Chemical mapping of a 177-nucleotide RNA with 2A3 and DMS. Reactivities are given for positions 27 through 126. The 2A3 profile rests on 6,102 reads.
[RMDB]
RNA sequence: GGGAACGACUCGAGUAGAGUCGAAAAGAUCAUGCCUUCGCCGGCGAUGAUCUCGGUGGCGGCGCCGAUAACGAUGUCGACGCCGGGCUGGAUGUCCGGGUUGCCGGCCUUGCCGAUGGCGGCGAUGCUACCUAUGUGUGUUCGCACACAUAGGUAGAAAAGAAACAACAACAACAAC
Reactivity to 2A3 in 0.01 (KOAc 150mM, MgCl2 10mM, bicine 150mM(pH8.5), 24C), signal-to-noise 4, nucleotides 027 to 126: g000a010u030c000a000u020g010c000c010u060u070c030g020c020c000g030g000c040g030a030u030g000a000u010c010u010c020g030g010u020g030g160c030g030g010c020g010c010c010g020a040u090a210a090c090g060a070u180g000u040c010g000a010c010g000c000c010g010g020g000c020u050g070g070a160u110g060u040c010c020g040g020g060u130u210g120c000c000g000g030c000c020u020u100g030c020c000g140a130u110g040g050c010g000g000c020g010a010u090g000
Reactivity to DMS in 0.01 (KOAc 150mM, MgCl2 10mM, bicine 150mM(pH8.5), 24C), signal-to-noise 2, nucleotides 027 to 126: g000a020u010c010a020u000g000c010c010u000u000c200g020c130c110g020g000c010g010a030u000g000a010u000c010u000c030g010g010u000g000g010c020g010g000c010g020c010c010g010a130u010a100a160c170g020a090u000g010u000c000g010a010c020g010c000c000g000g000g000c020u000g020g000a120u000g010u010c020c030g010g000g000u020u020g020c010c010g010g000c010c010u000u010g010c000c020g010a110u000g010g010c030g020g030c070g000a080u020g000